Conditions: 150 mM KOAc, 10 mM MgCl2 and 150 mM bicine (pH 8.5), 24 C. Chemical mapping of a 170-nucleotide RNA with DMS and 2A3. It was measured as part of the RMDB library 15KLIB. The DMS profile rests on 4,296 reads. For 2A3 the reverse transcriptase was SuperScript II with manganese.
RNA sequence: GGGAACGACUCGAGUAGAGUCGAAAAAGGUCACUCAAAUUGCUAACAUGUUCUUGGAACAGACUCAGCAUUCCCUUAACUUUGUGGGAGAGUUCGUUGUCAACGAUGUUGUCCUCGCAAUUCUCUCUGAGGAGCGCCUUCGGGCGCUCCAAAAGAAACAACAACAACAAC
Reactivity to DMS in 0.01 (KOAc 150mM, MgCl2 10mM, bicine 150mM(pH8.5), 24C), signal-to-noise 3, nucleotides 027 to 129: a140g010g000u080c140a110c080u000c060a000a000a000u000u000g000c070u030a040a210c180a050u000g030u040u070c030u040u040g050g000a030a060c110a080g000a120c070u020c170a050g040c020a030u110u000c030c000c010u000u060a120a000c000u000u020u010g060u070g010g000g000a040g000a130g070u020u000c070g000u000u000g020u010c030a000a100c020g040a180u070g010u030u010g010u100c100c000u000c000g010c210a030a030u020u010c000u000c000u020c040u040g010a000
Reactivity to 2A3 in 0.01 (KOAc 150mM, MgCl2 10mM, bicine 150mM(pH8.5), 24C), signal-to-noise 2, nucleotides 027 to 129: a000g240g030u300c000a000c000u060c040a070a160a030u010u000g010c000u090a100a060c070a140u000g000u020u030c040u180u200g000g000a020a020c000a000g000a000c020u000c070a010g040c010a000u000u000c030c000c000u040u000a090a190c220u110u190u160g130u060g000g000g010a010g000a000g040u040u050c000g000u000u050g080u050c010a000a000c080g220a230u210g030u090u000g070u090c000c000u000c000g000c260a000a000u000u000c030u000c000u000c000u000g000a050